[RMDB]
RNA sequence: GGGAACGACUCGAGUAGAGUCGAAAAGAGCAACUGGCAUGGCCCGAGCCAUGGCCGCCGCGUGGCCGCUGCUGCUGGUGGCGCUACUGGUGCUGUCCUGGCCACCCCCAGGAACCGGGGACGUCGUCGUGCAGGCGCCCACCCAGGUGCCCGGCUUCUUGGGCGACUCCGUGACGCUGCCCUGCUACCUACAGGUGCCCAACAUGGAGGUGACGCAUGUGUCACAGCUGACUUGGGCGCGGCAUGGUGAAUCUGGCAGCAUGGCCGAGGUCUAAUUCGUUAGACCUAAAAGAAACAACAACAACAAC
Reactivity to DMS in 0.01 (KOAc 150mM, MgCl2 10mM, bicine 150mM(pH8.5), 24C), signal-to-noise 8, nucleotides 027 to 266: g000a120g000c030a110a100c210u020g010g000c030a040u010g010g020c010c220c230g000a140g010c010c010a020u000g000g010c020c020g010c100c100g010c280g010u010g000g010c050c010g020c150u010g000c030u000g000c030u000g010g020u000g010g010c010g010c070u000a070c110u010g010g020u000g010c140u020g010u000c020c010u000g000g000c070c060a130c130c100c140c010c010a040g000g010a070a070c070c010g000g000g010g010a100c060g010u010c030g010u010c030g010u000g010c060a110g000g010c040g010c120c020c030a090c160c060c060a140g010g010u000g010c040c020c090g000g000c130u010u010c050u010u010g010g000g000c030g010a130c050u000c020c020g010u010g000a060c090g010c040u010g010c050c020c080u010g010c080u010a070c070c040u010a180c050a050g000g010u000g010c010c080c010a040a090c110a100u020g000g010a040g000g010u000g000a020c020g020c220a110u010g020u020g010u000c000a010c010a070g010c020u000g000a130c300u000u000g000g000g010c000g010c000g000g010c020a040u000g000g000u010g000a130a110u010c050u000g000g000c000a020g000c020a040u010g000g010c010c020g010
Reactivity to 2A3 in 0.01 (KOAc 150mM, MgCl2 10mM, bicine 150mM(pH8.5), 24C), signal-to-noise 2, nucleotides 027 to 266: g030a000g000c010a010a070c050u070g010g010c020a030u020g010g030c030c090c110g040a080g000c000c010a030u030g080g040c040c010g010c020c020g050c030g040u050g010g000c020c010g020c130u050g000c000u000g000c010u010g010g010u010g010g010c000g010c030u100a070c040u040g030g010u040g040c070u070g040u020c000c000u000g010g000c040c010a030c010c000c000c000c000a000g010g000a010a000c000c000g000g000g000g030a010c000g010u080c000g000u010c010g010u010g040c040a030g010g020c000g000c000c000c000a030c020c020c010a030g000g030u020g020c000c000c000g030g020c040u070u040c020u070u050g010g000g000c010g000a010c000u020c000c010g020u010g010a020c030g010c000u040g010c000c000c000u010g020c020u070a040c000c000u010a020c000a020g050g010u020g030c000c000c000a020a020c010a050u130g020g020a010g050g000u000g000a010c010g040c110a130u180g110u050g000u100c000a000c000a010g010c010u020g020a060c010u010u030g010g010g000c010g000c000g020g000c010a020u040g000g000u010g000a110a100u060c020u020g000g000c010a010g000c020a030u050g010g000c000c000g010